RNA sequence: GGGAACGACUCGAGUAGAGUCGAAAAGGAUUUUUCUUCGGAAAAAUCCAAACCCGAUGAAGCGGCACUUAGACAGCUUCAUACACCUAAGAGUGCAUAUAAAAACCGUUCAGUUCGCUGAACGGAACCUAAUCGUAUGGUUCGCCAUACGAUUAGGAAAAGAAACAACAACAACAAC
Reactivity to DMS in 0.01 (KOAc 150mM, MgCl2 10mM, bicine 150mM(pH8.5), 24C), signal-to-noise 2, nucleotides 027 to 126: g000g000a000u000u000u000u000u000c010u020u020c120g020g000a000a030a000a000a030u020c000c000a010a090a100c020c000c020g020a090u000g020a020a020g000c020g050g030c020a060c090u010u000a080g000a100c140a180g000c030u000u000c020a030u000a110c120a090c140c150u000a120a130g010a050g000u000g020c020a130u000a140u010a070a070a140a110a120c000c020g020u000u000c000a000g020u000u020c230g000c000u000g020a010a010c000g000g000a000a030
Reactivity to 2A3 in 0.01 (KOAc 150mM, MgCl2 10mM, bicine 150mM(pH8.5), 24C), signal-to-noise 3, nucleotides 027 to 126: g000g000a000u000u010u020u020u050c050u100u100c190g040g000a000a000a000a000a000u010c000c010a000a040a050c010c020c010g010a040u020g000a010a010g000c030g050g010c070a010c070u030u020a050g070a140c020a020g000c000u020u000c000a000u000a020c110a040c010c030u130a170a040g110a050g070u030g010c080a010u120a020u060a200a120a020a030a080c000c010g000u000u000c000a000g000u010u080c130g000c070u000g000a000a000c000g000g010a000a010